[RMDB]
RNA sequence: GGGAACGACUCGAGUAGAGUCGAAAAGAUAUGGAAUGUGGAACUACGAACUACAGCGUAGUGUCGGAAACGACAUGAUCGCUGCGCCACAUUCCUAAGUCAAAAGGGCCUCGUUCGCGAGGCCCAACAACACUUAACUGUUCGCAGUUAAGUGUUGAAAAGAAACAACAACAACAAC
Reactivity to DMS in 0.01 (KOAc 150mM, MgCl2 10mM, bicine 150mM(pH8.5), 24C), signal-to-noise 7, nucleotides 027 to 126: g010a040u000a300u010g000g000a010a000u010g000u000g000g010a120a090c190u010a280c150g010a090a080c120u020a160c030a010g000c010g010u000a260g000u000g000u000c000g010g010a080a070a180c000g010a010c000a000u000g000a130u010c000g010c000u000g000c110g000c000c000a010c010a020u000u000c000c010u000a010a080g000u010c030a060a040a120a120g010g010g000c000c000u000c000g010u000u010c180g010c010g000a010g010g010c000c010c000a010a010
Reactivity to 2A3 in 0.01 (KOAc 150mM, MgCl2 10mM, bicine 150mM(pH8.5), 24C), signal-to-noise 6, nucleotides 027 to 126: g010a000u060a030u120g000g000a000a010u010g010u030g010g010a070a120c150u220a100c300g090a150a060c090u210a090c290a030g000c010g010u020a020g010u030g010u000c010g010g030a050a070a040c020g000a000c010a010u050g010a050u300c010g000c020u020g010c000g010c000c010a010c000a000u000u000c000c000u000a030a010g050u020c030a000a000a070a200g000g000g000c010c000u010c000g020u070u060c270g000c010g070a000g030g000c000c000c000a000a000
This 177-nucleotide RNA was probed chemically with DMS and 2A3. For 2A3, 16,920 sequencing reads were counted. For DMS, 11,108 sequencing reads were counted. The RNA was probed in 150 mM KOAc, 10 mM MgCl2 and 150 mM bicine (pH 8.5) at 24 C. Reactivities are given for positions 27 through 126.